[RMDB]
Conditions: 150 mM KOAc, 10 mM MgCl2 and 150 mM bicine (pH 8.5), 24 C. This 207-nucleotide RNA was probed chemically with 2A3 and DMS. It was measured as part of the RMDB library OK3TST. DMS adducts were read by reverse transcription with MarathonRT. For 2A3 the reverse transcriptase was SuperScript II with manganese.

RNA sequence: GGGAACGACUCGAGUAGAGUCGAAAACUCAAGGUCUUACGGAUGACAGAGUCCGGCAGGACCACGGGUGUCACCAGCACCGCCACGGGAAUCUCCACCGAGGCGUCCAGAAGCAGGUCUGAGCCGAGCGUGCAGGUCGCCGGGUCUAGAGGCGACCAGCUCUGAACUUUUUCGAAAGUUCAGAGCUAAAAGAAACAACAACAACAAC
Reactivity to 2A3 in 0.01 (KOAc 150mM, MgCl2 10mM, bicine 150mM(pH8.5), 24C), signal-to-noise 1, nucleotides 027 to 156: c010u020c040a030a220g000g000u010c000u050u090a020c020g000g020a020u030g120a100c150a170g130a040g070u000c010c000g060g020c090a020g000g020a000c020c010a020c020g020g010g010u030g040u070c020a060c110c020a020g060c020a010c020c020g000c020c020a020c030g030g000g060a050a110u060c070u030c060c030a040c030c010g030a040g020g010c020g020u060c060c010a020g020a150a010g030c030a020g010g030u040c090u110g050a020g060c010c020g080a050g020c050g040u070g020c040a030g020g000u000c010g000c000c020g080g000g020u080c100u130a080g020a040g080g000c000g000a000c000c000
Reactivity to DMS in 0.01 (KOAc 150mM, MgCl2 10mM, bicine 150mM(pH8.5), 24C), signal-to-noise 2, nucleotides 027 to 156: c030u000c020a130a150g000g020u000c030u000u040a030c020g000g040a000u000g020a230c160a220g000a230g010u010c000c020g020g030c120a050g000g020a030c020c010a070c180g060g010g020u000g000u000c040a160c060c010a190g010c010a070c090c020g000c030c020a130c000g010g010g010a160a110u010c060u010c040c040a070c030c020g000a100g000g020c010g050u000c050c050a080g000a100a160g020c060a060g000g000u000c010u000g000a120g030c030c000g010a130g010c030g030u000g020c030a100g020g040u000c000g010c010c000g000g010g020u000c110u010a140g010a150g000g030c020g000a020c020c030